RNA sequence: GGGAACGACUCGAGUAGAGUCGAAAAUCUCCUAAUGGGAAUCCCUAUAACAAUUGCCUUGCGCAAUGGGGAACGGCCGGAAUUGAAGCAUCUCAGUACGGCCAGGAAGAGAAAUCGAAUGAGACGCCUGACGAAAGAAAUUCGUUUCUUUCGUCAGAAAAGAAACAACAACAACAAC
Reactivity to 2A3 in 0.01 (KOAc 150mM, MgCl2 10mM, bicine 150mM(pH8.5), 24C), signal-to-noise 5, nucleotides 027 to 126: u040c040u030c010c010u100a140a110u240g050g010g100a050a090u060c010c010c000u070a090u040a180a080c080a050a050u020u020g010c000c030u160u300g030c090g000c040a000a020u030g010g000g000g010a020a090c040g010g000c000c000g000g060a110a020u050u080g040a060a020g030c040a090u050c020u000c010a020g000u020a010c000g000g000c000c000a010g030g050a060a070g030a010g020a050a100a060u090c060g040a040a070u120g020a030g020a040c060g010c010
Reactivity to DMS in 0.01 (KOAc 150mM, MgCl2 10mM, bicine 150mM(pH8.5), 24C), signal-to-noise 3, nucleotides 027 to 126: u000c080u010c000c070u040a110a100u030g000g030g020a170a090u010c010c010c000u000a100u040a160a120c210a190a040u000u000g010c020c030u010u040g010c170g020c000a030a010u000g010g000g000g000a110a130c130g010g010c000c000g000g000a130a060u020u000g000a070a150g000c060a070u010c060u010c000a050g000u000a090c000g020g000c000c010a050g000g020a080a060g000a140g010a070a070a090u020c080g000a120a120u020g000a060g010a060c080g020c090
The data come from the RNA Mapping Database (RMDB), libraries RFM100 and RFMREP. An RNA of 177 nucleotides, treated with 2A3 and DMS and read out base by base. The 2A3 profile rests on 3,509 reads. The RNA was probed in 150 mM KOAc, 10 mM MgCl2 and 150 mM bicine (pH 8.5) at 24 C. 2A3 adducts were read by reverse transcription with SuperScript II with manganese.